Conditions: 150 mM KOAc, 10 mM MgCl2 and 150 mM bicine (pH 8.5), 24 C. Chemical mapping of a 177-nucleotide RNA with DMS. The data come from the RNA Mapping Database (RMDB), library TTRINS.
RNA sequence: GGGAACGACUCGAGUAGAGUCGAAAAGAUAUGGACAUUAUAUCGCGAAGAACUGUGUCACAGUUGGUCCAUGUCGGAAACGACAUGGACCAAUCACAGCACAGGGAGCGGCAUAAUGUCCUAAGUCCGUAAGACGGUAGUUCGCUACCGUCUUACGAAAAGAAACAACAACAACAAC
Reactivity to DMS in 0.01 (KOAc 150mM, MgCl2 10mM, bicine 150mM(pH8.5), 24C), signal-to-noise 1, nucleotides 027 to 126: g000a090u000a300u020g000g020a000c000a010u000u010a000u000a020u000c000g030c010g030a140a100g000a140a210c030u000g030u020g000u030c030a150c300a240g000u000u000g020g010u000c020c000a000u000g000u000c000g010g000a100a090a300c000g000a050c000a000u000g020g030a030c010c020a010a000u000c050a100c300a220g010c000a000c020a030g000g000g030a090g060c000g000g010c040a020u010a000a000u000g020u000c000c000u020a000a120g000u000c080